Structure probing data (DMS) for a 177-nucleotide construct.
The data come from the RNA Mapping Database (RMDB), library TTRDEL.
Conditions: 150 mM KOAc, 10 mM MgCl2 and 150 mM bicine (pH 8.5), 24 C.
RNA sequence: GGGAACGACUCGAGUAGAGUCGAAAAGAUAUGGAGUGUAUGGAGAUCCCACUCGGAAACGAGUGUGAGAUCUAUGAAGUACCUCCUAAGUCAAAGUCUGCACCAAAGUUCGCUUUGGUGCAGACAACGUACAAUCUGACUUCGGUCAGAUUGUACGAAAAGAAACAACAACAACAAC
Reactivity to DMS in 0.01 (KOAc 150mM, MgCl2 10mM, bicine 150mM(pH8.5), 24C), signal-to-noise 2, nucleotides 027 to 126: g000a020u000a060u000g000g000a040g010u010g020u000a000u000g000g000a010g010a000u000c010c010c000a010c000u000c000g020g000a000a020a020c010g030a010g000u000g010u010g030a260g010a010u000c000u000a150u010g010a100a210g000u000a010c010c010u000c000c000u000a000a090g000u010c020a120a110a140g020u000c000u000g000c000a010c000c000a000a010a000g000u010u020c260g010c010u010u000u010g010g030u010g010c000a010g000a010c010a020a050